Chemical mapping of a 177-nucleotide RNA with DMS. Reactivities are given for positions 27 through 126. Conditions: 150 mM KOAc, 10 mM MgCl2 and 150 mM bicine (pH 8.5), 24 C.
[RMDB]
RNA sequence: GGGAACGACUCGAGUAGAGUCGAAAACAUUGAGGACCUUGCUGAUGUUCCUGAGGGCGCCAAGGUGAUCUACUCUGCCCACGGCAUUCCCCCCGAGGUCCGUCAGCAGGCUGCAGACAGACAGCUGAAAGCCUCAAGCAUUCGUGCUUGAGGCUUUAAAAGAAACAACAACAACAAC
Reactivity to DMS in 0.01 (KOAc 150mM, MgCl2 10mM, bicine 150mM(pH8.5), 24C), signal-to-noise 2, nucleotides 027 to 126: c070a130u000u000g030a200g010g000a120c020c020u000u000g030c070u000g000a020u000g000u000u000c010c000u000g000a100g010g010g050c300g000c080c030a040a190g010g000u000g010a100u000c110u000a110c130u000c040u000g000c120c000c070a150c280g000g000c020a130u000u000c220c020c030c010c020c000g010a040g000g000u000c070c010g020u000c000a050g010c050a040g040g000c040u010g000c050a060g000a060c140a040g010a130c040a070g000c040u000g010